[RMDB]
RNA sequence: GGGAACGACUCGAGUAGAGUCGAAAACCGUUGAUCUUCGGAUCAACGGAAAUAAAAGCUCACCACCUGAAAAAAACAAGAGCAAGGCAGGAAAAUAAAUAAAAACGUGGGACUUCGGUCCCACGAAUCGUAUUAGAUUGUUCGCAAUCUAAUACGAAAAAGAAACAACAACAACAAC
Reactivity to 2A3 in 0.01 (KOAc 150mM, MgCl2 10mM, bicine 150mM(pH8.5), 24C), signal-to-noise 2, nucleotides 027 to 126: c000c000g000u000u010g010a000u000c020u050u090c230g140g000a000u000c000a000a000c010g000g010a000a010a010u020a000a040a010a020g020c020u020c030a030c030c010a020c010c000u060g030a100a060a060a040a000a030a110c130a080a020g040a010g030c030a040a010g060g000c040a020g050g060a060a150a040a170u140a090a050a040u140a050a090a050a010a010c000g000u000g000g000g000a000c000u020u030c270g090g000u000c000c000c010a010c000g000a000a000
Reactivity to DMS in 0.01 (KOAc 150mM, MgCl2 10mM, bicine 150mM(pH8.5), 24C), signal-to-noise 2, nucleotides 027 to 126: c010c000g020u000u000g000a010u000c000u000u010c260g020g030a020u000c010a000a000c000g010g000a010a020a040u000a060a090a090a190g010c000u000c040a080c080c040a120c070c030u020g000a010a000a070a090a080a110a130c090a080a090g000a070g000c020a060a040g000g000c060a060g020g010a090a050a060a040u010a050a090a120u000a040a050a070a130a110c010g020u000g000g010g010a010c010u000u030c140g030g000u020c000c000c000a000c000g010a010a030